[RMDB]
RNA sequence: GGGAACGACUCGAGUAGAGUCGAAAAAGGGCUAAAAUAUAACAUGCACCAUCUACAAUAGGAUUGUCGAUACUAUUUUUGUAAUAAAUUAGGAGUGCUUCAUAGUUUUCUCGAUGCUCAUGAUUGAUCCCUCUCUCUAAUUCGUUAGAGAGAGGGAAAAAGAAACAACAACAACAAC
Reactivity to DMS in 0.01 (KOAc 150mM, MgCl2 10mM, bicine 150mM(pH8.5), 24C), signal-to-noise 3, nucleotides 027 to 126: a050g010g000g020c050u010a060a120a080a080u010a080u000a080a070c060a060u020g000c040a050c020c090a030u000c010u000a040c040a080a060u000a060g000g020a300u010u010g000u010c060g020a100u000a160c020u000a010u000u000u000u010u000g000u010a070a080u000a030a030a050u000u000a050g010g010a090g020u000g000c050u000u000c110a050u000a040g020u010u010u000u010c040u000c030g000a100u000g000c060u000c030a050u000g000a170u000u000g000a200
Reactivity to 2A3 in 0.01 (KOAc 150mM, MgCl2 10mM, bicine 150mM(pH8.5), 24C), signal-to-noise 1, nucleotides 027 to 126: a020g030g000g000c000u070a010a010a220a000u300a050u050a080a050c020a050u050g010c000a000c010c010a010u010c010u020a020c030a020a060u050a160g160g010a120u030u060g020u090c030g010a050u000a160c010u090a060u030u040u000u060u030g030u050a060a050u070a200a190a120u070u070a020g000g050a060g000u020g000c000u040u000c000a070u050a050g050u020u000u090u000c010u040c050g020a010u050g000c030u010c040a030u170g100a050u110u190g080a020
Conditions: 150 mM KOAc, 10 mM MgCl2 and 150 mM bicine (pH 8.5), 24 C. This 177-nucleotide RNA was probed chemically with DMS and 2A3. For DMS the reverse transcriptase was MarathonRT. The DMS profile rests on 2,293 reads.